[RMDB]
RNA sequence: GGGAACGACUCGAGUAGAGUCGAAAAGCAGCCAAAUCCUAAGGACAUUUUAUUGUCUAUGGAUGCAGUUCACAGGCCAGAUGGCAAUGGGUAUCCUAGUGGGAUAUAUAUAUAUGGAUGCUUAAGACACAAAGCCUUGAUUCGUCAAGGCUUUGUGAAAAGAAACAACAACAACAAC
Reactivity to 2A3 in 0.01 (KOAc 150mM, MgCl2 10mM, bicine 150mM(pH8.5), 24C), signal-to-noise 4, nucleotides 027 to 126: g000c020a000g010c000c000a000a130a020u000c000c000u050a080a040g020g000a000c000a000u050u070u120u300a100u160u060g020u000c020u020a040u020g000g010a020u050g020c040a050g030u200u250c070a070c030a060g080g150c030c000a080g030a150u260g030g000c000a010a070u020g000g030g000u010a020u000c000c000u070a080g150u180g100g010g000a000u010a000u010a000u000a000u000a000u000a040u100g000g000a010u010g010c000u050u060a070a030g070a020
Reactivity to DMS in 0.01 (KOAc 150mM, MgCl2 10mM, bicine 150mM(pH8.5), 24C), signal-to-noise 4, nucleotides 027 to 126: g050c010a010g010c000c010a060a160a020u000c000c000u000a190a070g010g000a020c050a000u010u000u020u050a010u030u000g010u000c000u000a280u000g000g000a080u000g020c070a050g020u050u030c140a100c050a080g000g010c010c000a070g000a140u050g000g030c000a030a060u010g000g000g000u000a080u000c000c000u000a090g020u020g000g000g010a020u000a050u030a110u010a050u030a100u040a090u000g000g010a030u000g000c000u000u000a170a070g000a250
Notes:
The data come from the RNA Mapping Database (RMDB), libraries RFM100 and RFMREP. The record gives the reactivity of an RNA of 177 nucleotides to 2A3 and DMS. 2A3 is a SHAPE reagent: it acylates the 2'-hydroxyl of flexible nucleotides of all four kinds. Values cover nucleotides 27 to 126.